[RMDB]
RNA sequence: GGGAACGACUCGAGUAGAGUCGAAAAAUCGCUUGCUAUGAUUGUGGUAGCCAUCAUUAUUGUAGGUGUAUUAGCAUUUCAAUUUAUGAAUCAUACGGGUCCUUUCAAAAAGGGGACGAAUCAUGAACCGGAGUUAACUAUUCGUAGUUAACUCCGGAAAAGAAACAACAACAACAAC
Reactivity to 2A3 in 0.01 (KOAc 150mM, MgCl2 10mM, bicine 150mM(pH8.5), 24C), signal-to-noise 1, nucleotides 027 to 126: a000u000c010g000c050u030u040g000c040u040a010u040g030a070u070u030g000u010g020g100u060a100g100c010c010a000u040c010a010u050u110a020u090u100g020u040a030g030g010u000g040u010a150u120u100a040g070c030a030u020u030u160c020a070a020u010u100u070a060u110g030a020a010u130c040a030u100a170c070g160g030g100u000c000c010u060u090u070c090a110a100a000a030a000g000g020g020g020a000c030g040a000a020u120c030a030u130g090a020a030
Reactivity to DMS in 0.01 (KOAc 150mM, MgCl2 10mM, bicine 150mM(pH8.5), 24C), signal-to-noise 2, nucleotides 027 to 126: a030u000c060g000c020u000u000g020c050u010a080u030g030a030u010u000g010u010g010g020u020a100g020c100c040a020u000c120a030u010u000a060u010u010g010u010a020g040g040u010g000u010a090u020u000a100g020c180a080u000u000u000c030a040a100u000u000u000a030u000g020a040a080u000c040a120u010a070c110g000g000g000u000c010c000u000u000u020c130a040a040a060a090a120g000g010g020g000a050c020g010a060a040u000c090a010u000g000a040a140
An RNA of 177 nucleotides, treated with 2A3 and DMS and read out base by base.